[RMDB]
RNA sequence: GGGAACGACUCGAGUAGAGUCGAAAACGAACGCAACCUCGCAUUUCGCGCUCAAAUAUUUGUAUACGCACCAGUAAGUUAUAAAAGCUUACCGUUGACAAUACCGAGAUAAUUACCGACCUAACUAGGAAAUAAUCAUCUGGAGCACAAUAUUUAGCUCACCAUGGUUAUUCGUAACCAUGGUGAGAAAAGAAACAACAACAACAAC
Reactivity to DMS in 0.01 (KOAc 150mM, MgCl2 10mM, bicine 150mM(pH8.5), 24C), signal-to-noise 1, nucleotides 027 to 156: c000g060a080a020c000g050c070a080a080c030c070u020c030g080c020a240u030u000u000c050g010c000g050c030u000c000a060a050a070u000a070u000u000u010g030u000a180u010a110c040g010c010a040c030c030a020g040u010a000a030g030u000u020a300u000a090a070a100a150g010c010u000u000a020c010c000g000u020u010g030a060c090a060a100u000a070c040c050g000a070g030a010u000a000a020u000u000a040c040c050g000a270c020c030u010a060a080c110u010a260g000g000a070a140a060u010a020a050u000c000a020u000c010u080g060g000a150g000c050a080c040a050a080u000a080u000u000u000a110g040
Reactivity to 2A3 in 0.01 (KOAc 150mM, MgCl2 10mM, bicine 150mM(pH8.5), 24C), signal-to-noise 4, nucleotides 027 to 156: c000g040a020a020c050g000c040a050a060c030c030u070c060g000c070a070u060u120u100c080g000c010g000c020u020c050a050a130a020u140a070u060u090u080g040u020a070u030a070c070g000c030a040c020c010a020g010u000a020a010g000u100u040a130u090a270a160a040a000g000c000u000u010a010c010c000g030u000u070g040a060c020a030a050u020a100c030c020g030a010g010a050u060a110a030u110u060a050c030c020g040a040c050c030u060a070a110c040u050a060g000g060a070a020a070u110a030a050u060c020a010u030c060u070g020g010a010g030c030a000c030a050a040u070a070u100u150u070a040g010
The record gives the reactivity of an RNA of 207 nucleotides to DMS and 2A3. The DMS profile rests on 1,541 reads. Source: RMDB library OK3TST, as collected in RNAgym. Conditions: 150 mM KOAc, 10 mM MgCl2 and 150 mM bicine (pH 8.5), 24 C.